[RMDB]
RNA sequence: GGGAACGACUCGAGUAGAGUCGAAAAAUCCAUUUCUAUAAAUCAGUGUACAUGUCAUGAAUUUAAUGGCAAACUACAAACUUAUUUAUGAAAAUUAACGGCUAAUCCUUCCAUAUCCAUUUGGGAGGAUAAAUGGCCUCUUCGGAGGCCAUUUAUCAAAAGAAACAACAACAACAAC
Reactivity to 2A3 in 0.01 (KOAc 150mM, MgCl2 10mM, bicine 150mM(pH8.5), 24C), signal-to-noise 3, nucleotides 027 to 126: a000u060c030c000a010u010u000u000c130u100a020u010a010a010a000u030c020a000g060u000g000u050a040c060a090u020g000u040c000a000u000g230a250a200u300u220u300a160a020u010g000g000c000a030a030a030c040u030a010c020a010a150a010c000u000u010a000u010u000u000a000u040g030a010a010a010a030u150u150a140a040c060g080g040c080u110a100a020u030c000c010u000u000c000c010a010u030a050u130c030c030a030u050u110u040g010g000g010a010g000
Reactivity to DMS in 0.01 (KOAc 150mM, MgCl2 10mM, bicine 150mM(pH8.5), 24C), signal-to-noise 2, nucleotides 027 to 126: a020u010c000c000a200u000u040u000c020u010a010u000a010a010a040u000c070a010g000u000g000u000a010c190a300u010g000u020c000a000u000g010a200a040u030u010u040a120a030u000g010g000c000a000a070a180c300u010a020c050a020a070a110c010u020u010a010u020u000u000a000u010g000a020a020a020a120u040u060a050a070c160g000g030c080u040a070a040u000c000c000u000u010c000c000a000u000a060u050c160c150a110u010u000u030g010g000g010a010g000